This 207-nucleotide RNA was probed chemically with 2A3.
The RNA was probed in 150 mM KOAc, 10 mM MgCl2 and 150 mM bicine (pH 8.5) at 24 C.
It was measured as part of the RMDB library RNAMAK.
2A3 adducts were read by reverse transcription with SuperScript II with manganese.
RNA sequence: GGGAACGACUCGAGUAGAGUCGAAAAACCUUUGUGCGUUUGACAUGCCUGCCGAGGUGCUCUUGCCCAUUGGGCAAGAGAACUACACCGAAGUCAGGCAACAGCAAACGCACUCUGGUAAAAGGUGCCUUUGAGGUUUCGACCUCAAAGGCACCAACCUUGUCUUACACUUCGGUGUAAGACAAGGAAAAGAAACAACAACAACAAC
Reactivity to 2A3 in 0.01 (KOAc 150mM, MgCl2 10mM, bicine 150mM(pH8.5), 24C), signal-to-noise 2, nucleotides 027 to 156: a000c020c000u000u000u000g000u010g010c010g040u010u010u000g120a160c050a080u060g000c010c010u000g000c020c010g040a060g000g000u000g010c000u000c010u000u000g000c050c000c130a300u200u300g010g000g000c000a000a020g000a000g000a000a000c040u130a030c020a000c000c010g060a070a010g030u080c040a000g000g000c020a010a000c000a000g000c000a010a000a010c010g000c000a010c000u000c010u000g000g020u050a040a070a040a150g000g000u000g010c000c000u000u000u000g010a020g000g060u090u110u300c300g070a090c000c000u000c000a000a010a000g000g010c000a000c000c000a000a000